[RMDB]
RNA sequence: GGGAACGACUCGAGUAGAGUCGAAAAUGUAAAAAACAUCAUUUAGCGUGACUUUCUUUCAACAGCUAACAAUUGUUGUUACUGCCUAAUGUUUUUAGGGUAUUUUAAAAAAGGGCGAUAAAAAACGGACUUAUCAGCUUUUCGAAGCUGAUAAGUCAAAAGAAACAACAACAACAAC
Reactivity to DMS in 0.01 (KOAc 150mM, MgCl2 10mM, bicine 150mM(pH8.5), 24C), signal-to-noise 2, nucleotides 027 to 126: u000g000u040a010a020a150a060a040a040c030a030u010c090a040u000u000u000a060g030c020g030u000g000a120c100u000u020u000c040u040u000u000c080a070a080c090a090g000c050u010a030a010c300a120a150u000u000g000u000u000g000u010u010a040c150u030g020c020c010u000a050a030u050g000u000u000u010u020u000a030g000g000g020u040a000u020u020u010u010a010a010a040a030a060a070g020g030g000c010g000a040u030a000a080a050a080a050a140c270g020
Reactivity to 2A3 in 0.01 (KOAc 150mM, MgCl2 10mM, bicine 150mM(pH8.5), 24C), signal-to-noise 2, nucleotides 027 to 126: u150g010u050a080a110a030a060a000a040c030a090u090c090a140u010u110u060a070g030c040g020u020g020a080c010u100u130u060c050u050u200u100c090a040a080c020a040g030c020u000a010a030c080a060a080u010u000g030u000u010g000u010u010a030c040u060g000c010c010u080a080a110u110g110u160u000u020u010u110a100g000g000g000u110a070u140u070u050u090a080a140a000a000a000a030g090g000g010c070g050a050u180a100a080a050a000a020a000c080g040